Chemical mapping of a 207-nucleotide RNA with 2A3.
Conditions: 150 mM KOAc, 10 mM MgCl2 and 150 mM bicine (pH 8.5), 24 C.
2A3 adducts were read by reverse transcription with SuperScript II with manganese.
Source: RMDB library OK3TST, as collected in RNAgym.

RNA sequence: GGGAACGACUCGAGUAGAGUCGAAAAAUAAUCAAUCCUCAAUGGUGAAUUUAAUCGGUGAUUUGCCAAUCGUCUUGCGGUGCGAGUUGACCAGCUUUUCAAACUUAUCCAUGCAUUCACGCAAAUCAGUAAAUGUGCUGGCGCUACCCAUUACACGUCCCUGGUAACCUUUCGAGGUUACCAGGGAAAAAGAAACAACAACAACAAC
Reactivity to 2A3 in 0.01 (KOAc 150mM, MgCl2 10mM, bicine 150mM(pH8.5), 24C), signal-to-noise 1, nucleotides 027 to 156: a000u230a050a060u180c020a000a080u070c010c010u060c030a040a120u030g010g100u030g110a120a070u000u110u220a120a080u070c100g160g040u170g150a150u000u080u040g060c080c090a010a070u010c070g090u000c080u040u070g040c090g000g030u010g000c070g030a010g010u050u050g300a110c000c020a000g020c000u150u020u000u050c050a150a260a000c000u000u040a000u040c080c060a040u030g010c010a120u160u300c020a060c160g010c000a060a120a180u030c000a000g000u070a090a010a000u010g100u030g000c010u000g000g010c000g000c000u000a020c000c030c000a060u120u110a020c250a000c160g100